[RMDB]
RNA sequence: GGGAACGACUCGAGUAGAGUCGAAAACUCUGUGUUGGGGCCCCUGACUAGAAUUGAAAAAAGCUUAUUACAAGCGCAUUUUCGUUCAGUCAAUUACUGCCAAUAUAACUUCGUAGAUCAUAGAACAGUAUUCACCUCGGUUCGCCGAGGUGAAUACAAAAGAAACAACAACAACAAC
Reactivity to 2A3 in 0.01 (KOAc 150mM, MgCl2 10mM, bicine 150mM(pH8.5), 24C), signal-to-noise 1, nucleotides 027 to 126: c000u000c010u080g010u020g030u010u080g000g000g180g020c000c010c000c010u050g000a000c010u040a090g000a000a050u160u300g070a010a020a010a000a010a010g050c020u000u020a030u110u300a220c120a100a030g000c000g000c060a000u000u000u000u000c030g000u000u050c020a000g000u000c040a010a010u140u090a010c000u010g100c000c000a010a000u000a040u010a170a100c000u000u170c100g000u000a010g030a060u080c020a020u010a030g070a120a110c080a090
Chemical mapping of a 177-nucleotide RNA with 2A3. 2A3 adducts were read by reverse transcription with SuperScript II with manganese. For 2A3, 384 sequencing reads were counted.